RNA sequence: GGGAACGACUCGAGUAGAGUCGAAAAACAGCAGGCUGGCAGGGGAUAAUGGCAGGCUGCCUGACUCCUCCCUUCUGCCCCAGGCCCUGCCCUGGAGCCAUUAUGUGCUGAGAUGGGGGAUGAGGUGAUGUAAUCCACGUUUCGACGUGGAUUACAUAAAAGAAACAACAACAACAAC
Reactivity to DMS in 0.01 (KOAc 150mM, MgCl2 10mM, bicine 150mM(pH8.5), 24C), signal-to-noise 2, nucleotides 027 to 126: a140c130a030g000c020a070g010g010c050u010g010g010c040a030g010g000g000g010a100u010a080a070u010g000g010c030a070g030g020c120u010g010c020c010u010g010a160c100u000c010c030u000c030c020c020u000u000c080u010g010c030c030c020c010a060g010g000c010c030c020u000g000c050c000c050u000g000g000a050g010c020c040a130u000u000a060u000g010u010g020c040u000g000a090g000a100u010g000g010g000g000g010a090u010g000a060g010g000u000g000
Description: Structure probing data (DMS) for a 177-nucleotide construct. The RNA was probed in 150 mM KOAc, 10 mM MgCl2 and 150 mM bicine (pH 8.5) at 24 C. The DMS profile rests on 2,959 reads. Source: RMDB library OK2TRN, as collected in RNAgym.